[RMDB]
RNA sequence: GGGAACGACUCGAGUAGAGUCGAAAAGAAAUAGGAGCUUAACGUGCUUGUAGUGUGCUGUUGACGGCAGUUCCUUCUACAACUCACUUCCUAAGCCAAUUCUGGACUUUGGUCAGGAAUCUGAGCAGAGACUUAACUACUUCGGUAGUUAAGUCUCAAAAGAAACAACAACAACAAC
Reactivity to 2A3 in 0.01 (KOAc 150mM, MgCl2 10mM, bicine 150mM(pH8.5), 24C), signal-to-noise 3, nucleotides 027 to 126: g020a000a070a000u180a050g060g070a050g040c110u160u130a080a010c060g040u030g020c040u010u030g020u020a030g000u000g030u050g040c030u030g040u140u100g140a090c100g050g020c010a020g010u030u060c020c000u040u060c010u010a030c000a050a020c010u000c020a010c020u060u040c010c010u030a070a020g010c000c000a020a020u100u030c030u140g140g000a110c010u050u090u210g140g000u040c020a040g030g030a040a020u100c170u050g010a030g020c020a040
Reactivity to DMS in 0.01 (KOAc 150mM, MgCl2 10mM, bicine 150mM(pH8.5), 24C), signal-to-noise 4, nucleotides 027 to 126: g000a040a110a130u000a070g030g000a060g000c110u000u010a080a130c200g000u000g010c300u000u010g030u010a050g000u020g010u010g010c020u000g010u000u030g000a100c240g030g010c050a050g010u000u000c260c060u000u000c040u010a050c070a050a080c040u000c020a030c090u000u010c020c010u010a060a170g000c010c030a030a060u000u000c080u000g010g010a040c110u010u010u010g010g010u000c060a100g020g000a000a030u010c120u000g020a090g020c070a170